[RMDB]
RNA sequence: GGGAACGACUCGAGUAGAGUCGAAAAGGACUACCGAGAAUGAUGCGGGGAGCUGUGUGCGGCCCACACGGCGCGUUGGAGCUGCAGCUGCAAGUGGCUGUACGUGGCGCGGGUGGCUGUGCUGACGCUGAUUACGGGUCUUCGGACCCGUAAUCAGAAAAGAAACAACAACAACAAC
Reactivity to DMS in 0.01 (KOAc 150mM, MgCl2 10mM, bicine 150mM(pH8.5), 24C), signal-to-noise 1, nucleotides 027 to 126: g020g000a070c030u010a110c030c030g050a110g000a020a020u050g030a080u000g000c040g010g000g030g000a090g000c010u020g000u020g030u000g000c060g000g000c060c040c040a040c020a070c080g000g030c000g050c040g010u050u020g010g010a150g040c000u000g020c000a080g000c030u010g000c040a120a050g010u020g010g000c010u000g000u000a030c070g030u050g000g010c030g000c020g010g000g020u000g000g010c030u000g040u000g000c000u000g000a070c150g010
Reactivity to 2A3 in 0.01 (KOAc 150mM, MgCl2 10mM, bicine 150mM(pH8.5), 24C), signal-to-noise 2, nucleotides 027 to 126: g070g020a070c030u050a050c030c000g030a010g040a090a140u190g060a030u170g040c040g000g000g000g060a060g020c050u030g000u000g000u010g080c040g020g020c000c160c000a020c000a000c000g100g060c060g000c030g030u100u090g050g020a070g000c050u050g000c040a010g040c000u080g050c040a160a010g020u090g220g000c000u010g080u040a020c100g020u080g020g040c070g010c030g030g030g000u050g030g030c000u020g000u020g040c000u000g060a030c040g010